Structure probing data (DMS and 2A3) for a 177-nucleotide construct. 2A3 is a SHAPE reagent: it acylates the 2'-hydroxyl of flexible nucleotides of all four kinds. The data come from the RNA Mapping Database (RMDB), library OK1LIB. The RNA was probed in 150 mM KOAc, 10 mM MgCl2 and 150 mM bicine (pH 8.5) at 24 C.
RNA sequence: GGGAACGACUCGAGUAGAGUCGAAAAGAAAGAAAGAAAAGGCCAAAGAAGCGCACGAAAAGAAAAGAAAAACGUGCGCGUGGGAAUGCGCGACCGACAAGAAAGGCCAAGAAAUCGUGCAUGAAAAGAUAAUUACCGUAUUCGUACGGUAAUUAUCAAAAGAAACAACAACAACAAC
Reactivity to DMS in 0.01 (KOAc 150mM, MgCl2 10mM, bicine 150mM(pH8.5), 24C), signal-to-noise 6, nucleotides 027 to 126: g010a110a080a110g010a110a080a100g010a080a110a100a110g010g010c010c010a080a080a100g000a150a230g000c000g000c010a000c000g000a030a070a110a130g000a080a110a080a110g010a080a080a050a110a110c000g010u000g010c010g010c000g020u020g000g010g000a080a020u000g000c000g010c000g010a050c030c010g000a070c160a070a050g010a070a070a100g000g010c020c010a050a090g010a030a100a090u010c020g020u000g010c010a010u030g010a070a080a040a100
Reactivity to 2A3 in 0.01 (KOAc 150mM, MgCl2 10mM, bicine 150mM(pH8.5), 24C), signal-to-noise 6, nucleotides 027 to 126: g070a000a030a000g100a040a080a000g090a050a140a010a030g030g010c030c030a130a080a040g120a170a010g050c010g000c010a000c010g060a030a050a020a080g120a020a110a020a010g110a040a080a020a000a000c010g000u000g000c000g000c000g000u020g000g010g010a080a100u020g000c010g000c000g000a000c010c010g060a050c030a040a010g130a170a070a020g020g000c000c020a020a020g060a030a070a000u040c000g000u000g000c010a010u060g040a050a080a000a000